The record gives the reactivity of an RNA of 177 nucleotides to DMS and 2A3.
RNA sequence: GGGAACGACUCGAGUAGAGUCGAAAAUGUAUCUCACCGUCUUAUAGACCAAACCUUUUUCCUUAGACAUAUAUAAAUACUUUUCUCAGGCAUAUGCAGUGUGGUGACAUAAGCACCUUGUGAAUGAAUAGUAUGCUGUUUUCGAACAGCAUACUAUAAAAGAAACAACAACAACAAC
Reactivity to DMS in 0.01 (KOAc 150mM, MgCl2 10mM, bicine 150mM(pH8.5), 24C), signal-to-noise 5, nucleotides 027 to 126: u010g000u000a070u010c030u000c030a080c090c090g000u010c030u000u010a090u020a090g010a110c070c090a030a070a100c060c020u000u000u000u000u000c020c010u000u000a070g010a090c040a050u000a060u000a100u000a070a050a090u010a080c060u010u000u000u000c030u000c030a070g020g000c090a040u000a050u000g010c040a070g000u010g010u000g000g010u000g000a070c070a060u000a070a100g010c060a070c060c040u000u010g020u010g010a090a090u000g000a120
Reactivity to 2A3 in 0.01 (KOAc 150mM, MgCl2 10mM, bicine 150mM(pH8.5), 24C), signal-to-noise 4, nucleotides 027 to 126: u070g000u020a130u000c020u010c020a030c020c020g050u020c030u040u180a160u100a100g060a040c000c050a030a070a090c010c020u060u050u000u050u060c010c000u030u030a030g050a050c030a010u170a000u080a010u060a210a190a070u170a240c010u050u100u060u000c030u000c030a010g020g000c020a050u040a030u170g040c040a030g040u000g020u040g120g070u000g040a050c010a080u120a060a030g040c030a050c020c030u070u100g070u030g060a090a100u060g050a020
About this RNA:
For DMS, 5,685 sequencing reads were counted. The reactions ran in a buffer of 150 mM KOAc, 10 mM MgCl2 and 150 mM bicine (pH 8.5), at 24 C.